[RMDB]
RNA sequence: GGGAACGACUCGAGUAGAGUCGAAAAGCAUUGGGAAAGUUAAUCAAAAGUGCAUCAAAACUUUCCCUAAACGAAAUCAUAAUCGUUAUGAUGCACUUUUGACAUCGAUUAAGAUGAAUAGACACAAAUAUGCUUAGUUCUUCGGAACUAAGCAUAUAAAAGAAACAACAACAACAAC
Reactivity to DMS in 0.01 (KOAc 150mM, MgCl2 10mM, bicine 150mM(pH8.5), 24C), signal-to-noise 3, nucleotides 027 to 126: g000c120a130u000u000g020g000g010a090a130a150g000u000u000a080a130u010c020a000a010a010a000g010u000g010c010a000u000c020a040a090a080a100c110u010u000u000c000c010c000u000a020a020a010c000g000a010a080a090u010c240a100u020a150a050u000c030g000u010u000a240u000g000a010u000g000c000a020c010u000u000u000u000g010a070c010a010u000c000g020a150u000u010a060a100g020a000u000g010a080a120u010a070g000a160c130a050c230a050a080
Reactivity to 2A3 in 0.01 (KOAc 150mM, MgCl2 10mM, bicine 150mM(pH8.5), 24C), signal-to-noise 2, nucleotides 027 to 126: g070c060a060u120u260g020g010g010a030a120a070g080u160u090a140a040u090c010a000a000a010a000g000u000g000c020a000u000c030a000a110a120a130c010u040u030u010c000c040c000u010a000a000a000c010g010a070a000a040u240c060a100u160a230a020u070c020g020u020u030a020u040g030a010u000g010c000a000c000u010u000u000u000g030a000c000a000u010c000g110a120u210u180a190a120g010a020u050g000a030a030u090a050g170a010c020a020c050a170a180
Structure probing data (DMS and 2A3) for a 177-nucleotide construct. For 2A3, 1,058 sequencing reads were counted. 2A3 is a SHAPE reagent: it acylates the 2'-hydroxyl of flexible nucleotides of all four kinds. Source: RMDB library M2PK90, as collected in RNAgym. DMS adducts were read by reverse transcription with MarathonRT. Values cover nucleotides 27 to 126. The DMS profile rests on 2,231 reads.